[RMDB]
RNA sequence: GGGAACGACUCGAGUAGAGUCGAAAAGAAGGAUAGUUCGCUAUCCUUCAAACCCACCGAAAGGCAAAUGUGUUUGAUGCCCUCUAACACAUAAACCGGGCAAAACAGUACCGUUCGCGGUACUGAAUCACAGAUAUCUCUUCGGAGAUAUCUGUGAAAAAGAAACAACAACAACAAC
Reactivity to DMS in 0.01 (KOAc 150mM, MgCl2 10mM, bicine 150mM(pH8.5), 24C), signal-to-noise 2, nucleotides 027 to 126: g000a000a000g000g020a020u000a000g030u000u020c190g020c000u000a000u000c000c000u000u000c000a020a040a120c020c000c000a140c160c110g000a100a100a090g020g020c050a030a250a030u000g000u000g000u000u000u000g000a090u020g020c250c100c080u010c020u000a030a020c000a050c010a000u000a030a180a080c020c020g000g010g010c160a060a060a050a140c000a010g020u000a000c000c010g040u000u030c220g020c010g000g000u000a010c010u000g000a120a070
Reactivity to 2A3 in 0.01 (KOAc 150mM, MgCl2 10mM, bicine 150mM(pH8.5), 24C), signal-to-noise 1, nucleotides 027 to 126: g020a000a000g000g000a000u010a000g020u030u030c060g010c100u000a000u010c000c010u010u010c000a000a000a000c000c000c000a000c020c040g160a110a060a030g040g000c060a090a190a000u040g010u020g010u010u030u070g070a080u300g020c030c060c000u000c010u010a020a010c010a000c000a010u020a010a020a040c010c010g030g040g000c000a000a060a070a080c000a000g000u000a000c010c000g030u040u050c260g000c000g080g000u000a000c000u000g000a000a020